[RMDB]
RNA sequence: GGGAACGACUCGAGUAGAGUCGAAAAUACCAAUGGUUCGCCAUUGGUACUUGUAUUGACGAAUACUACCGUAGAAGUAUUCAGGUCUCAUAACUACCGAUAUACACUAGAGUUUCGACUCUAGUAAAGUGACAGUGUAUUUCGAUACACUGUCACUAAAAGAAACAACAACAACAAC
Reactivity to 2A3 in 0.01 (KOAc 150mM, MgCl2 10mM, bicine 150mM(pH8.5), 24C), signal-to-noise 4, nucleotides 027 to 126: u050a010c010c000a000a000u010g000g030u050u050c190g040c090c010a000u000u000g010g010u010a020c010u040u110g080u090a130u030u130g040a030c010g010a010a010u010a000c010u030a070c000c110g100u140a100g050a260a000g010u000a020u010u020c040a030g090g130u000c010u000c040a120u090a160a070c050u090a070c030c020g080a100u050a020u030a240c070a010c040u000a000g000a010g010u030u070u060c170g100a030c000u000c010u000a010g000u030a010a030
Reactivity to DMS in 0.01 (KOAc 150mM, MgCl2 10mM, bicine 150mM(pH8.5), 24C), signal-to-noise 4, nucleotides 027 to 126: u000a010c010c000a000a000u000g000g020u000u020c230g020c010c000a000u000u000g010g010u000a010c010u010u000g010u000a070u000u000g000a080c090g010a040a020u000a000c000u000a110c090c300g000u010a100g000a080a020g000u030a010u000u000c030a090g010g020u000c030u010c080a130u000a110a060c110u000a110c020c030g000a100u000a090u000a090c200a040c010u000a020g010a020g010u020u000u010c220g000a020c000u000c000u000a000g000u010a010a030